About this RNA: Conditions: 150 mM KOAc, 10 mM MgCl2 and 150 mM bicine (pH 8.5), 24 C. This 177-nucleotide RNA was probed chemically with 2A3 and DMS. For 2A3 the reverse transcriptase was SuperScript II with manganese. Reactivities are given for positions 27 through 126. DMS adducts were read by reverse transcription with MarathonRT. For 2A3, 4,901 sequencing reads were counted. Source: RMDB library OK2TRN, as collected in RNAgym.

RNA sequence: GGGAACGACUCGAGUAGAGUCGAAAAGAGUACGCACUACUCACAGGCGAUCGCAGGAGUUAGCCGGUACUACUCGAUCAACUGCGGGCUGCGCCUGGCGAUUAUCUUCCACCCGACUGGUGUCGACUCUUUACCCUUCAUUCGUGAAGGGUAAAGAAAAAGAAACAACAACAACAAC
Reactivity to 2A3 in 0.01 (KOAc 150mM, MgCl2 10mM, bicine 150mM(pH8.5), 24C), signal-to-noise 4, nucleotides 027 to 126: g030a000g030u070a050c070g020c050a070c060u080a020c010u050c020a040c010a010g010g070c040g030a040u030c020g010c020a010g020g060a040g040u120u260a020g050c030c000g090g000u030a010c000u030a010c000u020c090g210a300u160c090a060a080c020u040g000c040g050g040g020c080u130g040c010g020c010c010u030g070g020c030g010a020u070u080a050u130c050u100u000c030c030a030c020c020c010g060a060c050u110g140g000u060g030u120c020g040a040c010
Reactivity to DMS in 0.01 (KOAc 150mM, MgCl2 10mM, bicine 150mM(pH8.5), 24C), signal-to-noise 5, nucleotides 027 to 126: g010a050g010u000a050c090g030c080a110c070u000a050c070u010c030a220c100a050g020g010c160g000a050u010c030g010c060a020g000g000a030g020u000u000a040g030c040c050g020g010u010a090c040u010a030c020u000c010g010a120u010c160a110a280c060u000g000c030g010g010g000c070u000g010c030g010c020c010u000g000g020c060g010a070u010u010a030u000c060u010u000c070c060a100c050c010c040g010a060c110u000g000g000u010g020u010c030g000a130c120